RNA sequence: GGGAACGACUCGAGUAGAGUCGAAAACCUGUAAUCCAAGCUACUGGGAGGCUGAGGCUGCGGAUCGCUUGAGCUCAGGGCUUCUGGACUGCAGUGGACUAUGUUGAUCAGGUGUCCACACUAAGUUCGGUAUCGAUAUGGUGCUCCUGGGGGAGCUAGAAGAUACGAACUUCGGUUCGUAUCUUCUAAAAGAAACAACAACAACAAC
Reactivity to 2A3 in 0.01 (KOAc 150mM, MgCl2 10mM, bicine 150mM(pH8.5), 24C), signal-to-noise 1, nucleotides 027 to 156: c000c000u000g030u060a000a060u000c020c020a010a010g000c020u090a170c010u180g010g130g010a080g100g010c040u060g080a070g120g000c020u040g020c090g010g140a120u070c080g000c030u000u020g020a010g050c010u060c210a000g020g030g030c000u150u000c060u000g010g000a000c010u000g030c040a030g000u010g000g040a000c010u000a090u130g030u070u190g120a040u220c020a020g090g040u060g000u000c000c000a030c010a010c040u130a000a050g030u020u080c030g000g050u070a100u090c030g000a020u000a020u260g050g030u060g010c000u060c050c000u110g000g020g070g000g040a010g040c000u010
Structure probing data (2A3) for a 207-nucleotide construct. 2A3 adducts were read by reverse transcription with SuperScript II with manganese.